Annotation: Structure probing data (DMS and 2A3) for a 207-nucleotide construct. For 2A3 the reverse transcriptase was SuperScript II with manganese. Conditions: 150 mM KOAc, 10 mM MgCl2 and 150 mM bicine (pH 8.5), 24 C.
RNA sequence: GGGAACGACUCGAGUAGAGUCGAAAAUCUUAGUGCCCACUCUGAGUCUUACUGACUUUUAUUCAGCAUGUCAUUCUUAAUAAACUUGGUUAUCUGGUUUCCCAGCCCACGACAGAUUAGAAACAGCAAAGGGGAAGCUGAGAAGAGACACAGUGAAACUCACGUAAAAUUUCGAUUUUACGUGAGUAAAAGAAACAACAACAACAAC
Reactivity to DMS in 0.01 (KOAc 150mM, MgCl2 10mM, bicine 150mM(pH8.5), 24C), signal-to-noise 2, nucleotides 027 to 156: u010c050u010u010a080g030u000g030c000c020c020a200c150u000c040u000g010a080g000u000c060u010u000a080c070u000g030a090c160u010u000u000u010a140u010u020c010a110g000c040a080u000g000u000c040a080u010u000c070u010u000a090a110u000a030a040a120c040u000u000g020g000u010u000a080u000c070u000g030g000u010u000u000c060c000c020a240g000c080c030c010a040c060g020a150c000a030g020a110u000u000a110g010a190a050a100c030a050g000c040a040a040a150g010g000g030g010a080a200g040c030u000g010a120g010a140a080g000a120g010a090c000a060c030a170g000u010g000a140a070
Reactivity to 2A3 in 0.01 (KOAc 150mM, MgCl2 10mM, bicine 150mM(pH8.5), 24C), signal-to-noise 5, nucleotides 027 to 156: u050c020u060u080a030g040u040g090c010c010c010a020c040u070c040u040g040a020g040u030c020u070u170a080c030u100g080a040c010u070u060u010u020a140u050u080c030a010g020c020a060u100g100u130c020a070u140u000c040u030u120a100a060u070a140a130a070c050u090u100g030g010u070u070a050u100c030u050g050g000u010u090u040c000c000c020a010g010c020c010c000a040c040g080a030c030a000g070a020u060u130a070g080a100a090a020c030a000g030c030a050a050a110g020g000g000g020a020a020g000c030u050g060a020g030a100a030g030a020g020a020c030a010c020a090g040u070g160a210a050

For 2A3, 2,551 sequencing reads were counted.